[RMDB]
RNA sequence: GGGAACGACUCGAGUAGAGUCGAAAAUGGACGUUGUUCGCAACGUCCACAUACUGAGACGUACGUUAAACGUAUCGCGGGCAAAAGUGCAGUUUGAAUAAGUACCUAUUGAGUUCGCUCAAUAGAAACUAAGACAUAGUUUCGACUAUGUCUUAGUAAAAGAAACAACAACAACAAC
Reactivity to 2A3 in 0.01 (KOAc 150mM, MgCl2 10mM, bicine 150mM(pH8.5), 24C), signal-to-noise 9, nucleotides 027 to 126: u050g000g000a000c000g010u010u000g020u040u060c160g000c090a010a000c000g000u000c000c000a000c000a000u040a000c010u080g050a020g040a080c030g030u020a000c010g040u050u210a140a240a020c010g010u020a030u160c050g000c030g020g060g000c050a060a070a040a040g060u080g040c020a030g020u050u100u100g110a110a050u170a180a020g050u060a060c000c010u000a010u000u020g010a010g020u030u100c220g000c070u000c000a000a000u010a010g050a050a020
Reactivity to DMS in 0.01 (KOAc 150mM, MgCl2 10mM, bicine 150mM(pH8.5), 24C), signal-to-noise 9, nucleotides 027 to 126: u000g000g010a010c000g010u000u000g010u000u010c200g030c010a020a010c000g010u000c000c010a010c090a050u010a080c060u000g010a110g010a110c060g010u000a020c040g000u010u010a060a080a190c030g010u000a020u010c070g020c040g010g010g010c090a040a050a080a100g010u000g010c040a050g010u000u000u000g000a080a070u000a060a070g000u000a090c140c000u000a010u000u000g000a010g020u000u010c210g010c010u000c000a000a010u000a000g010a060a080

Chemical mapping of a 177-nucleotide RNA with 2A3 and DMS. For DMS the reverse transcriptase was MarathonRT. Values cover nucleotides 27 to 126. For DMS, 35,357 sequencing reads were counted. Conditions: 150 mM KOAc, 10 mM MgCl2 and 150 mM bicine (pH 8.5), 24 C.